[RMDB]
RNA sequence: GGGAACGACUCGAGUAGAGUCGAAAAACGAGGCCUGCAACUCAUUUCCCCAUUAAACAUUCUGAGAACAUCUGCACCGGUUUCCAAGGCUUCUCCCUCACUAAUUGCUCUGAUUAUUGUGUGAAGUUGAAGAAGCCAAUUUCGAUUGGCUUCUUCAAAAAGAAACAACAACAACAAC
Reactivity to 2A3 in 0.01 (KOAc 150mM, MgCl2 10mM, bicine 150mM(pH8.5), 24C), signal-to-noise 3, nucleotides 027 to 126: a000c040g010a030g020g070c000c040u080g060c020a030a100c010u020c050a010u060u000u000c000c000c010c040a070u130u220a060a070a010c020a070u120u000c030u120g050a020g020a080a030c050a100u040c010u030g000c010a020c000c010g050g030u020u050u000c030c000a040a010g040g000c000u090u000c000u010c000c040c000u030c010a010c030u040a020a070u040u050g040c020u010c010u050g110a200u030u120a100u150u110g030u030g040u040g060a060a050g020u040
Reactivity to DMS in 0.01 (KOAc 150mM, MgCl2 10mM, bicine 150mM(pH8.5), 24C), signal-to-noise 1, nucleotides 027 to 126: a060c070g000a010g050g000c070c040u000g000c030a110a140c050u000c030a110u000u000u000c030c030c000c180a180u110u120a070a050a100c110a090u000u050c000u010g010a030g000a080a040c040a000u020c020u000g010c000a020c000c010g010g000u000u000u000c010c050a090a030g000g000c030u000u000c030u000c010c020c000u000c040a110c040u000a070a070u020u000g000c040u000c060u030g000a090u060u000a120u010u000g050u000g000u000g030a040a040g010u030